[RMDB]
RNA sequence: GGGAACGACUCGAGUAGAGUCGAAAAUGAUGAAAAGAGUUCAAAGGUUCGACACGGUAAAGAUGAAGGCCCGAUUCGAUGAGAACGGCUUUCUGGUUGAUACUCCGAUCGUGGCGCGUAUCGGUGCGCAGACGUACCAGACGCCAACCGGGCCGCGUGAUCCGUAAAAUUUCGAUUUUACGGAUCAAAAAGAAACAACAACAACAAC
Reactivity to 2A3 in 0.01 (KOAc 150mM, MgCl2 10mM, bicine 150mM(pH8.5), 24C), signal-to-noise 2, nucleotides 027 to 156: u020g030a000u060g010a020a030a020a140g090a010g000u040u040c060a020a120a020g040g050u070u080c080g050a040c050a020c060g000g060u080a050a090a080g010a050u100g060a090a020g020g000c070c050c010g020a100u080u030c060g000a040u150g040a010g030a070a060c050g020g000c000u030u100u000c010u000g020g030u000u070g060a040u070a070c020u010c040c020g010a050u050c070g070u080g080g000c040g000c010g100u080a030u130c050g000g030u040g000c100g000c070a050g060a150c030g010u020a020c000c000a000g010a010c030g010c000c010a010a000c020c020g000g000g000c020c000g000c010g020
Reactivity to DMS in 0.01 (KOAc 150mM, MgCl2 10mM, bicine 150mM(pH8.5), 24C), signal-to-noise 2, nucleotides 027 to 156: u000g010a150u000g000a080a090a040a090g000a110g000u000u010c030a060a130a110g010g010u000u000c030g020a090c060a070c040g020g030u000a030a060a150g000a120u000g010a070a090g000g000c010c020c050g000a160u000u000c020g010a150u010g010a220g010a070a090c070g010g010c010u000u000u020c010u000g040g010u030u020g000a210u000a060c000u000c010c000g030a050u010c040g010u030g050g030c090g060c020g020u000a100u000c080g000g000u020g020c030g000c070a140g010a150c050g010u010a070c000c010a100g010a030c300g030c000c030a060a020c000c000g010g020g000c030c000g010c060g020